Notes
This 177-nucleotide RNA was probed chemically with DMS and 2A3. For DMS the reverse transcriptase was MarathonRT. Conditions: 150 mM KOAc, 10 mM MgCl2 and 150 mM bicine (pH 8.5), 24 C.

RNA sequence: GGGAACGACUCGAGUAGAGUCGAAAACAAACAAAAUGGCACUUACUGGUAAGCUUAGCGUUGAAACCGUGAUCCGUUCACCUGCUGCAAAGUUCUUCAACCUCAUGGCAAGGCAAAACAAACAAAACAUCAAUCUGACCUUCGGGUCAGAUUGAUGAAAAGAAACAACAACAACAAC
Reactivity to DMS in 0.01 (KOAc 150mM, MgCl2 10mM, bicine 150mM(pH8.5), 24C), signal-to-noise 1, nucleotides 027 to 126: c040a220a110a130c300a000a020a010a100u010g200g000c000a010c040u000u000a040c000u000g000g000u030a050a000g130c070u000u000a160g000c120g110u060u050g000a080a060a050c000c040g000u000g060a050u000c040c000g020u010u000c010a000c070c000u000g000c000u030g000c030a010a120a000g000u000u000c000u000u000c050a020a110c160c070u000c000a000u000g000g000c110a140a130g000g000c090a000a020a010a140c260a000a000a180c200a140a020a090a040
Reactivity to 2A3 in 0.01 (KOAc 150mM, MgCl2 10mM, bicine 150mM(pH8.5), 24C), signal-to-noise 2, nucleotides 027 to 126: c040a020a060a000c000a000a170a000a130u070g050g000c050a010c040u010u130a010c020u060g050g060u180a010a120g050c000u000u090a020g020c020g100u000u140g060a160a000a000c050c010g000u000g000a080u070c000c050g060u080u060c030a060c020c000u040g010c000u030g000c010a000a120a000g020u010u000c000u070u050c040a040a070c010c020u060c020a060u070g070g000c060a030a050g050g020c000a010a010a010a040c100a070a110a000c040a060a140a000a000